[RMDB]
An RNA of 207 nucleotides, treated with 2A3 and read out base by base. 2A3 adducts were read by reverse transcription with SuperScript II with manganese. Source: RMDB library VIROID, as collected in RNAgym.
RNA sequence: GGGAACGACUCGAGUAGAGUCGAAAACGGAGGUUGUCUCGCUCUUGAGAGCUCCGCUCCUUGUAGCUUUGAGACUACCGCCCUUUUGCUUCCUUCUCGCUGGCUGACUCGAGGACGCGACCGGUGGUACACCAAGAGGUCUCCACCUCCUAGGGUAGUUGUAGCCUUUCUUCGGAAAGGCUACAACAAAAGAAACAACAACAACAAC
Reactivity to 2A3 in 0.01 (KOAc 150mM, MgCl2 10mM, bicine 150mM(pH8.5), 24C), signal-to-noise 1, nucleotides 027 to 156: c080g020g000a000g030g000u010u000g000u010c000u040c000g000c000u020c000u140u300g070a300g000a020g300c160u200c230c300g110c030u050c010c140u060u090g120u300a020g000c140u280u210u230g000a000g000a000c030u060a030c000c000g110c000c000c000u120u060u100u020g000c030u060u210c100c000u030u060c060u100c170g010c060u090g020g020c000u000g020a050c010u030c000g040a020g000g040a120c020g030c020g060a000c000c070g020g020u050g010g060u130a020c010a040c050c000a120a050g180a080g030g020u040c020u000c080c000a010c000c000u140c000c040u100a140g090g000g000u070a060